[RMDB]
RNA sequence: GGGAACGACUCGAGUAGAGUCGAAAAGAACCAAAUUUGAUCAUUAACCAACAAGCAAGUGUUAACUUUGCUUUUGCAUAAGUAGAUACUAAAGCUACAGCUGGUGAAUAGUCAUAGUUUGCUAGCUGUCAUAGUUUAUGACUCGAGGUUAAAUCGUAUCUAACCAACCGUUCGCGGUUGGUUAGAUAAAAGAAACAACAACAACAAC
Reactivity to 2A3 in 0.01 (KOAc 150mM, MgCl2 10mM, bicine 150mM(pH8.5), 24C), signal-to-noise 1, nucleotides 027 to 156: g000a010a000c050c000a050a050a070u130u110u130g070a070u080c090a000u050u040a040a070c010c010a070a070c070a080a020g040c030a030a000g010u000g010u120u080a010a060c060u020u130u050g000c000u010u100u120u220g000c020a020u020a160a020g030u020a020g050a130u110a150c020u110a280a100a000g050c050u030a000c000a010g000c010u010g000g020u000g010a000a000u050a040g140u100c070a080u090a100g000u000u010u010g000c010u000a020g010c010u020g030u030c000a040u070a020g010u030u030u030a010u010g070a080c080u030c050g000a000g020g080u070u030a010a020a030u140c010g000u070
An RNA of 207 nucleotides, treated with 2A3 and read out base by base. The data come from the RNA Mapping Database (RMDB), library ARCHII. For 2A3, 418 sequencing reads were counted.